[RMDB]
The data come from the RNA Mapping Database (RMDB), library M2PK90. Structure probing data (2A3 and DMS) for a 177-nucleotide construct. Reactivities are rounded to 0.1 and cut off at 0 and 3. For 2A3 the reverse transcriptase was SuperScript II with manganese. The RNA was probed in 150 mM KOAc, 10 mM MgCl2 and 150 mM bicine (pH 8.5) at 24 C. DMS adducts were read by reverse transcription with MarathonRT.
RNA sequence: GGGAACGACUCGAGUAGAGUCGAAAAGCAUUGGGAAAGUUAAUCAAAAGUGCAUCAAAACUUUCCCUAAACGAAAUCAAAAUCGUUAUGAUGCACUUUUGACAUCGAUUAAGAAGAAUAGACACAAGUUUAGCACUGUAUUCGUACAGUGCUAAACAAAAGAAACAACAACAACAAC
Reactivity to 2A3 in 0.01 (KOAc 150mM, MgCl2 10mM, bicine 150mM(pH8.5), 24C), signal-to-noise 3, nucleotides 027 to 126: g040c040a060u110u220g020g040g040a040a090a060g060u120u160a100a070u050c010a000a010a010a000g000u000g000c010a010u020c020a010a070a080a120c040u000u030u000c000c000c000u000a000a000a010c010g020a030a000a030u190c110a080a060a000a130u020c010g000u030u030a060u130g030a010u000g030c000a020c000u000u000u000u010g020a000c010a040u090c050g120a100u130u150a090a040g040a060a020g040a050a100u050a090g120a040c010a010c020a130a130
Reactivity to DMS in 0.01 (KOAc 150mM, MgCl2 10mM, bicine 150mM(pH8.5), 24C), signal-to-noise 3, nucleotides 027 to 126: g010c080a070u020u000g000g000g020a080a090a100g000u000u010a120a160u000c010a000a000a010a010g000u000g010c010a000u010c000a020a190a100a150c130u010u010u000c000c000c010u000a020a020a020c000g010a010a070a070u010c300a090a050a150a060u000c000g000u000u000a260u000g000a000u000g010c000a010c000u000u000u000u000g010a070c110a070u000c060g000a090u010u000a060a090g000a070a060g010a060a070u000a060g010a040c070a050c160a100a070